[RMDB]
RNA sequence: GGGAACGACUCGAGUAGAGUCGAAAACGAAGGGGCGCGAAUGAUGAUCGCCCCUGCCCUGCUGGUGGGUUUCGCCAAAGGGAUUUUGCUGCUGGUCGGUAAUGGUGAAGCGGGUGAUGCCAGCGUACUCCCUAAUACGUUUCGACGUAUUAGGGAGAAAAGAAACAACAACAACAAC
Reactivity to DMS in 0.01 (KOAc 150mM, MgCl2 10mM, bicine 150mM(pH8.5), 24C), signal-to-noise 6, nucleotides 027 to 126: c270g010a170a030g020g000g010g010c020g030c100g010a180a110u010g010a140u000g000a180u010c010g000c000c000c000c000u000g000c020c000c000u010g020c070u000g000g020u000g000g010g010u000u000u000c030g010c010c000a020a140a170g010g010g000a110u000u000u010u010g020c040u000g000c030u010g000g010u010c040g010g010u000a060a140u000g010g020u000g010a030a040g000c030g010g000g000u010g010a100u000g000c020c000a030g000c020g020u000a100
Reactivity to 2A3 in 0.01 (KOAc 150mM, MgCl2 10mM, bicine 150mM(pH8.5), 24C), signal-to-noise 6, nucleotides 027 to 126: c060g080a050a030g000g000g010g010c010g020c040g100a090a150u210g130a080u090g010a040u200c000g000c000c000c000c000u000g000c000c010c020u030g010c010u020g000g020u030g020g130g020u010u020u030c010g010c020c000a060a080a050g110g030g010a040u090u140u090u110g030c030u020g000c010u110g060g060u220c030g010g050u090a120a100u080g020g000u030g020a010a010g020c030g000g070g050u170g060a060u180g010c000c000a000g000c020g010u030a060